Chemical mapping of a 207-nucleotide RNA with 2A3. 2A3 adducts were read by reverse transcription with SuperScript II with manganese. Source: RMDB library RNAMAK, as collected in RNAgym. The RNA was probed in 150 mM KOAc, 10 mM MgCl2 and 150 mM bicine (pH 8.5) at 24 C.
[RMDB]
RNA sequence: GGGAACGACUCGAGUAGAGUCGAAAACGACGAGUAGUUCGCUACUCGUCGAAAAAGAUAUGGAUUAUCAAGAGCAUCGAUCUCGUCUUUCGGAAACGAAAGCGAGGGAGCUUGAUAAUCCUAAGUCAAAAAACGUCGUCCGUUCGCGGACGACGAAUCGUUGAGAAGAGUUCGCUCUUCUCAACGAAAAAGAAACAACAACAACAAC
Reactivity to 2A3 in 0.01 (KOAc 150mM, MgCl2 10mM, bicine 150mM(pH8.5), 24C), signal-to-noise 2, nucleotides 027 to 156: c020g000a000c000g000a000g000u020a000g020u080u110c240g010c150u000a000c000u010c010g000u000c000g010a000a000a000a010a010g010a000u010a000u020g000g000a010u000u020a000u000c020a030a020g060a030g300c040a060u300c140g100a100u030c040u000c010g300u200c050u010u000u000c000g010g000a010a000a010c000g000a010a000a000g000c030g000a000g000g000g000a070g010c000u000u020g000a000u000a000a000u010c000c000u010a020a000g000u010c020a000a060a080a080a000a060c020g040u040c000g010u030c020c010g010u030u060c290g000c020g030g000a000c000g010a000c000g000a010a020